[RMDB]
RNA sequence: GGGAACGACUCGAGUAGAGUCGAAAAACAUCUCACUGGGAAGUGAGAUGUGAGUCCGCAUGGGAAUGCGGACGGUCGAUCAGACAUUUAUCGUAUAUGUCUGGAGGAGAACGAGAUGUACGGGAGUAGAUCGAGUUCUGCUCGCAGAAUACGCAGCGUGUUGACGUGUAUUCGUACACGUCAGCACAAAAGAAACAACAACAACAAC
Reactivity to DMS in 0.01 (KOAc 150mM, MgCl2 10mM, bicine 150mM(pH8.5), 24C), signal-to-noise 3, nucleotides 027 to 156: a030c000a020u000c000u000c010a010c020u010g040g030g000a300a030g030u010g000a010g000a010u000g000u010g000a060g010u000c010c060g000c010a020u020g020g030g040a280a060u000g050c020g000g010a000c030g010g000u010c050g000a090u000c030a050g010a090c040a090u000u000u000a140u000c140g000u000a080u000a060u000g010u010c000u000g000g010a090g010g000a060g010a030a060c030g020a300g010a080u000g010u000a070c000g040g010g020a300g050u000a030g000a020u010c000g010a300g010u000u000c000u000g000c010u000c010g000c000a060g010a160a070u000a060c030g040c100a210g000c210
Reactivity to 2A3 in 0.01 (KOAc 150mM, MgCl2 10mM, bicine 150mM(pH8.5), 24C), signal-to-noise 7, nucleotides 027 to 156: a000c000a000u000c000u000c000a000c010u020g020g080g100a100a020g010u000g000a000g000a000u000g000u000g000a010g000u000c000c000g000c000a000u030g040g070g130a160a070u010g000c000g000g000a000c010g010g030u070c040g030a130u110c000a030g030a030c010a020u060u090u080a150u150c030g000u020a040u010a030u160g130u020c010u000g000g010a010g030g040a000g000a000a000c010g000a000g000a030u030g040u210a010c020g070g090g090a120g030u020a020g010a060u010c010g010a010g010u000u000c010u030g060c000u000c030g050c010a010g020a040a010u040a020c040g000c030a020g010c020